[RMDB]
RNA sequence: GGGAACGACUCGAGUAGAGUCGAAAAUUGACCAGCGCAGGUUCUGACGCGACCGGUGGCAUCACCGAGUUUCGCUCAAAGCCUCAAUCUCCUUUUUCUCAUUCUAGCUUGGUCUCCGGGCGAGGGUGUUUAGCCCUUGGAACCGCAGUUGGUUCCUACCCAUAACUUCGUUCGCGAAGUUAUGGGUAAAAGAAACAACAACAACAAC
Reactivity to 2A3 in 0.01 (KOAc 150mM, MgCl2 10mM, bicine 150mM(pH8.5), 24C), signal-to-noise 1, nucleotides 027 to 156: u030u040g050a020c030c020a040g010c080g030c090a010g040g020u000u000c040u000g010a040c100g000c010g000a000c000c000g040g010u030g050g160c150a140u300c000a230c040c020g070a090g120u070u130u140c010g000c020u010c000a000a040a000g020c030c000u040c050a000a060u100c070u220c000c020u100u120u030u210u050c070u030c070a120u250u010c070u180a030g050c040u010u090g020g000u000c000u000c000c000g000g010g110c020g010a040g040g000g040u060g060u140u220u210a040g020c000c000c050u000u040g020g020a050a030c000c030g090c140a080g030u120u160g030g010u010u070c000c000u020